[RMDB]
RNA sequence: GGGAACGACUCGAGUAGAGUCGAAAAAGCGCUCAAAUAUGGCGAACAGCUCUCGGCAUCGUAGGACAAGUUUGGCUUGAAGAACUUGGUGACACACUCACAAGUUUCGGUCAGUGUGGUGAAGCCCGCUUUUAUCCGAUUUCGAUCGGAUAAAAGCAAAAGAAACAACAACAACAAC
Reactivity to 2A3 in 0.01 (KOAc 150mM, MgCl2 10mM, bicine 150mM(pH8.5), 24C), signal-to-noise 4, nucleotides 027 to 126: a010g060c040g000c000u050c040a090a180a060u270a110u180g020g020c020g040a080a030c070a060g030c000u000c030u040c060g000g010c010a050u010c070g080u090a060g020g040a040c020a040a040g000u030u050u070g110g000c000u110u190g020a080a050g030a030a060c030u100u050g120g020u060g110a010c020a000c020a030c090u030c010a050c010a040a030g000u010u020u020c040g000g000u030c010a020g020u020g010u020g020g040u020g040a120a020g010c000c000c010
Reactivity to DMS in 0.01 (KOAc 150mM, MgCl2 10mM, bicine 150mM(pH8.5), 24C), signal-to-noise 2, nucleotides 027 to 126: a040g010c060g000c010u040c040a060a030a060u020a070u010g000g020c030g030a050a080c130a130g000c030u010c030u000c060g000g000c020a030u000c030g000u020a010g000g000a080c070a040a040g010u000u020u000g020g000c120u030u000g000a130a050g010a040a040c010u000u010g020g010u030g010a070c110a070c230a120c110u000c040a060c050a080a030g000u000u010u000c000g010g010u000c020a060g000u010g020u000g000g000u000g020a030a050g020c000c000c070